[RMDB]
RNA sequence: GGGAACGACUCGAGUAGAGUCGAAAAGGCAGGAAUAGAAUGGGCCGAAUCUAGUGUGACACUGCAGGCCAGAUGCUAUUUUUGUUUGGCGCAAGGCCUGGUGGCUGAUGCGGCUGUGUUCUCCAAGCAAUAUUAUAAUAUUCGUAUUAUAAUAUUGAAAAGAAACAACAACAACAAC
Reactivity to DMS in 0.01 (KOAc 150mM, MgCl2 10mM, bicine 150mM(pH8.5), 24C), signal-to-noise 7, nucleotides 027 to 126: g010g010c040a060g010g010a110a070u020a040g010a070a040u000g010g000g020c000c010g010a080a050u020c030u040a040g020u010g020u030g010a200c030a020c020u010g010c050a030g020g010c010c000a060g010a150u020g000c000u000a010u010u010u030u040u030g010u010u020u010g000g010c010g020c100a150a180g000g010c000c000u010g000g010u010g000g010c010u010g000a060u010g010c010g000g010c010u000g010u010g010u000u000c020u000c030c050a120a140g010
Reactivity to 2A3 in 0.01 (KOAc 150mM, MgCl2 10mM, bicine 150mM(pH8.5), 24C), signal-to-noise 5, nucleotides 027 to 126: g090g030c050a020g020g070a050a070u100a110g050a040a060u100g040g010g010c000c010g000a010a010u020c040u100a030g030u070g070u100g100a020c010a010c040u210g030c050a020g000g010c000c010a010g040a050u050g000c000u010a100u080u090u010u080u140g220u070u090u120g020g000c020g000c060a060a070g010g020c060c010u020g000g010u030g010g000c010u010g010a020u050g010c010g010g000c020u030g030u010g010u120u020c050u000c010c010a030a010g020